[RMDB]
RNA sequence: GGGAACGACUCGAGUAGAGUCGAAAAUAGAUUCAUACAGCAUCCACACAGCAGUGUAUGGACAUUCAUUAAGACGCUCAUCAAUAUCAUCCUUCUUUAGGUUGUGUGGUGGGGUUAUGGUAAAUUCAGGAUAGUGAGUAUUCGUACUCACUAUCCUAAAAGAAACAACAACAACAAC
Reactivity to DMS in 0.01 (KOAc 150mM, MgCl2 10mM, bicine 150mM(pH8.5), 24C), signal-to-noise 7, nucleotides 027 to 126: u010a120g010a140u000u010c020a020u000a040c030a080g010c050a120u010c040c060a060c110a070c140a100g020c060a110g020u000g020u000a020u000g010g010a020c100a130u010u000c090a080u010u010a070a130g010a060c100g020c020u000c020a030u000c020a030a110u010a070u000c030a040u000c010c010u000u010c300u010u010u000a040g020g000u000u000g020u000g020u000g010g030u000g000g000g010g000u000u000a060u000g010g010u010a040a060a120u000u010c110
Reactivity to 2A3 in 0.01 (KOAc 150mM, MgCl2 10mM, bicine 150mM(pH8.5), 24C), signal-to-noise 5, nucleotides 027 to 126: u120a030g150a150u040u010c010a000u010a040c000a020g040c020a090u040c060c010a060c020a020c020a090g050c010a040g140u000g010u080a030u030g020g010a010c000a040u080u090c020a040u040u190a140a050g050a030c060g050c200u020c020a030u000c010a020a110u070a070u220c010a010u010c010c000u060u160c060u110u300u130a030g000g020u030u010g000u010g000u010g000g000u020g010g000g000g010u030u060a050u110g070g040u090a080a100a110u110u100c050
This 177-nucleotide RNA was probed chemically with DMS and 2A3. The DMS profile rests on 8,815 reads. The reactions ran in a buffer of 150 mM KOAc, 10 mM MgCl2 and 150 mM bicine (pH 8.5), at 24 C.